[RMDB]
RNA sequence: GGGAACGACUCGAGUAGAGUCGAAAACAAUCAAUGGUGUCUCGUAUCAACUCGCAUGGGAUGUCACACGAAAACCGCUUUCUUAUAAACAACAAAAUGUUUUGGCCAUUGAAAGUAUUCGUUACCUUGGUUCUAAAGAGCAUACUUUGAGAGCUGGCAUAAAUGGGCGUUUCGACGCCCAUUUAUGAAAAGAAACAACAACAACAAC
Reactivity to DMS in 0.01 (KOAc 150mM, MgCl2 10mM, bicine 150mM(pH8.5), 24C), signal-to-noise 1, nucleotides 027 to 156: c050a130a130u000c030a040a180u000g020g070u000g000u010c000u000c010g020u000a140u000c000a120a090c030u000c050g000c050a160u000g000g020g030a030u010g000u010c020a040c130a170c100g000a040a020a070a050c040c100g030c040u000u000u020c030u000u000a060u000a030a090a040c000a020a150c050a050a060a120a230u000g000u000u000u000u000g030g000c030c060a160u010u010g000a060a020a070g000u000a170u010u010c060g000u010u010a040c010c030u000u010g030g010u010u000c050u000a080a020a110g000a160g030c030a120u010a040c010u000u000u000g020a150g000a040g000c030u000g000g040
Reactivity to 2A3 in 0.01 (KOAc 150mM, MgCl2 10mM, bicine 150mM(pH8.5), 24C), signal-to-noise 4, nucleotides 027 to 156: c030a000a060u120c020a030a090u090g030g000u030g050u000c020u020c020g060u090a090u170c070a040a110c040u050c090g050c090a110u110g030g000g050a040u070g040u060c030a040c010a020c120g110a020a030a030a030c030c010g030c020u050u110u000c030u030u210a140u090a250a110a020c050a010a010c050a070a150a090a100u070g030u000u070u050u070g100g000c030c070a060u040u070g030a070a050a000g040u050a070u060u100c060g040u030u060a050c000c010u010u120g050g010u060u040c020u090a080a040a020g040a010g010c010a030u030a190c030u040u060u070g080a050g000a010g000c050u040g040g000